RNA sequence: GGGAACGACUCGAGUAGAGUCGAAAAACUAAUUAUGAAAAUUGGUGUUCUCAGAUCCUGUUGCCUAUCAUACCACAGGCUGGUGUUAGCACAAGGGAAAUCCCCAUACAUGAUUCAGAAAUCAAGACCAUAUUUGUCGGUUCGCCGACAAAUAUGGAAAAGAAACAACAACAACAAC
Reactivity to 2A3 in 0.01 (KOAc 150mM, MgCl2 10mM, bicine 150mM(pH8.5), 24C), signal-to-noise 1, nucleotides 027 to 126: a000c040u030a040a000u130u080a220u260g100a010a110a090a150u050u020g000g000u040g010u120u010c020u000c000a020g020a150u090c010c020u050g020u060u040g010c020c000u060a110u120c040a060u040a100c000c000a040c030a090g140g030c030u000g010g000u020g030u040u010a030g000c020a010c020a140a070g060g000g020a020a050a100u070c000c000c000c000a000u040a150c090a030u090g040a050u100u080c050a100g160a060a090a020u010c010a130a000g070a050
Reactivity to DMS in 0.01 (KOAc 150mM, MgCl2 10mM, bicine 150mM(pH8.5), 24C), signal-to-noise 2, nucleotides 027 to 126: a030c010u000a020a010u000u000a180u000g010a100a060a060a030u000u010g010g000u000g010u010u010c030u010c030a130g000a180u000c020c000u000g010u000u000g010c130c030u000a020u020c080a090u000a060c040c030a070c100a100g000g000c160u010g020g020u010g020u000u000a060g000c090a010c090a050a060g000g000g010a030a080a130u000c030c010c000c010a090u010a110c150a060u010g010a020u000u000c170a100g000a090a080a090u000c060a070a070g010a270
Record summary: Structure probing data (2A3 and DMS) for a 177-nucleotide construct. For DMS, 927 sequencing reads were counted. It was measured as part of the RMDB library OK2TRN. The RNA was probed in 150 mM KOAc, 10 mM MgCl2 and 150 mM bicine (pH 8.5) at 24 C. 2A3 is a SHAPE reagent: it acylates the 2'-hydroxyl of flexible nucleotides of all four kinds.